Source: RMDB library M2PK50, as collected in RNAgym. The record gives the reactivity of an RNA of 177 nucleotides to DMS and 2A3. The RNA was probed in 150 mM KOAc, 10 mM MgCl2 and 150 mM bicine (pH 8.5) at 24 C. DMS adducts were read by reverse transcription with MarathonRT. Values are in units of 0.01, from 0 to 300, in steps of 10. Reactivities are given for positions 27 through 126. 2A3 adducts were read by reverse transcription with SuperScript II with manganese.

RNA sequence: GGGAACGACUCGAGUAGAGUCGAAAACUCUGCUAAUUCGUUAGCAGAGGUACACUGGGACGGGUCGGGAGGGGGAUACUCGGGGUCCCAAGAAGAAUCCAGCAAGCACAUUAUUCGUAAUGUGCAAGAUCAAGUAAGGAUUCGUCCUUACUUGAUCAAAAGAAACAACAACAACAAC
Reactivity to DMS in 0.01 (KOAc 150mM, MgCl2 10mM, bicine 150mM(pH8.5), 24C), signal-to-noise 3, nucleotides 027 to 126: c010u000c000u000g010c000u000a000a010u000u010c220g010u010u000a010g010c000a030g000a010g000g010u010a040c140a140c070u000g000g000g000a130c100g010g000g000u000c150g010g000g000a160g000g000g000g010g000a030u000a030c050u000c060g020g010g000g010u000c020c010c030a030a090g010a070a090g010a070a050u010c040c060a030g010c150a070a110g030c000a000c000a010u000u000a020u000u020c230g020u000a010a010u000g010u000g020c010a030a070
Reactivity to 2A3 in 0.01 (KOAc 150mM, MgCl2 10mM, bicine 150mM(pH8.5), 24C), signal-to-noise 5, nucleotides 027 to 126: c000u000c000u000g000c000u010a000a030u080u060c190g060u060u010a000g000c010a000g000a000g020g000u040a030c080a010c030u050g020g040g190a040c050g050g030g150u190c090g030g030g080a230g050g040g000g020g020a020u050a070c030u030c020g010g000g000g030u010c000c000c000a010a010g050a020a000g030a010a040u040c030c010a020g050c080a140a040g010c000a010c000a010u010u030a010u070u100c150g030u030a000a010u010g000u000g010c010a000a010